[RMDB]
RNA sequence: GGGAACGACUCGAGUAGAGUCGAAAACCUUCCUUUGCUGCUGUGUAUGUAUGUGCUCUCUCGCGUGUGUGCGUGUGAGAGCACACACGCAUCUGCCGAGUGCGUACGUGAGGAGGGAGCGGACACGAUCCUGGUAGUCGUUCGCGACUACCAGGAUAAAAGAAACAACAACAACAAC
Reactivity to 2A3 in 0.01 (KOAc 150mM, MgCl2 10mM, bicine 150mM(pH8.5), 24C), signal-to-noise 4, nucleotides 027 to 126: c020c000u040u070c040c000u110u120u140g050c010u040g000c010u030g030u050g030u180a060u090g020u030a020u010g050u050g020c000u010c000u000c010u030c020g000c000g010u020g000u010g020u030g000c010g050u110g040u110g150a140g000a000g090c000a000c000a000c000a000c010g020c000a010u010c040u060g040c040c060g050a020g040u090g030c020g000u010a020c010g030u030g040a020g020g040a020g010g000g020a020g030c050g040g040a080c050a020c120g060
Reactivity to DMS in 0.01 (KOAc 150mM, MgCl2 10mM, bicine 150mM(pH8.5), 24C), signal-to-noise 1, nucleotides 027 to 126: c050c010u000u000c000c000u000u020u020g000c010u000g000c050u010g020u050g030u020a020u030g040u000a010u020g000u010g000c020u010c000u030c040u000c080g020c000g000u000g040u000g010u000g010c020g010u040g010u040g020a150g000a220g000c010a000c020a020c000a000c000g000c000a100u010c080u000g000c110c150g000a030g040u000g010c000g000u010a000c060g020u010g020a050g010g000a030g010g000g010a110g000c010g000g000a050c140a050c140g000

Structure probing data (2A3 and DMS) for a 177-nucleotide construct.
Conditions: 150 mM KOAc, 10 mM MgCl2 and 150 mM bicine (pH 8.5), 24 C.
It was measured as part of the RMDB library OK1LIB.
Reactivities are rounded to 0.1 and cut off at 0 and 3.
Reactivities are given for positions 27 through 126.
2A3 adducts were read by reverse transcription with SuperScript II with manganese.
For DMS, 3,135 sequencing reads were counted.
The 2A3 profile rests on 3,489 reads.